RNA sequence: GGGAACGACUCGAGUAGAGUCGAAAAAGAACUGAAAUAUCUACACACCAACUCCAACCAGGGUUUGGUUGAGGGCUGCUCCCGGGAGGUCUUGAUUGGGUAGCAUUUCCAGCCUGCCCCUCAAGUGGCAAAGUGGUCUUUAGCAGCAAGAGGAAGACACUCCUUAAAGUUUCGACUUUAAGGAGUGAAAAGAAACAACAACAACAAC
Reactivity to DMS in 0.01 (KOAc 150mM, MgCl2 10mM, bicine 150mM(pH8.5), 24C), signal-to-noise 2, nucleotides 027 to 156: a070g010a130a280c030u010g000a090a110a130u000a070u000c030u000a110c050a190c010a050c030c020a020a040c000u000c000c000a060a090c040c080a160g020g010g020u000u000u020g030g040u000u000g020a150g010g000g020c030u000g020c050u000c000c000c000g020g050g030a160g010g020u000c050u030u000g020a090u000u000g030g000g030u010a020g000c060a160u000u000u000c100c050a060g020c100c010u000g030c020c010c030c150u000c010a050a100g000u000g030g020c030a070a060a100g020u000g030g000u000c030u000u010u000a060g060c000a060g010c010a050a100g010a110g020g010a030a090g010a200
Reactivity to 2A3 in 0.01 (KOAc 150mM, MgCl2 10mM, bicine 150mM(pH8.5), 24C), signal-to-noise 3, nucleotides 027 to 156: a000g060a070a020c050u090g040a080a080a070u200a070u020c050u140a030c060a010c010a000c060c010a020a040c020u050c040c010a110a110c040c050a110g100g000g000u140u180u090g030g020u010u030g020a110g010g050g000c050u030g020c000u040c020c010c010g020g060g000a070g030g040u040c000u040u050g040a040u100u290g010g000g000u020a000g000c010a040u080u030u140c050c010a020g020c010c010u010g010c000c000c000c010u010c010a040a020g000u070g060g020c050a060a040a070g060u100g060g010u000c000u050u110u090a020g010c030a000g000c000a020a040g020a020g030g040a020a040g080a010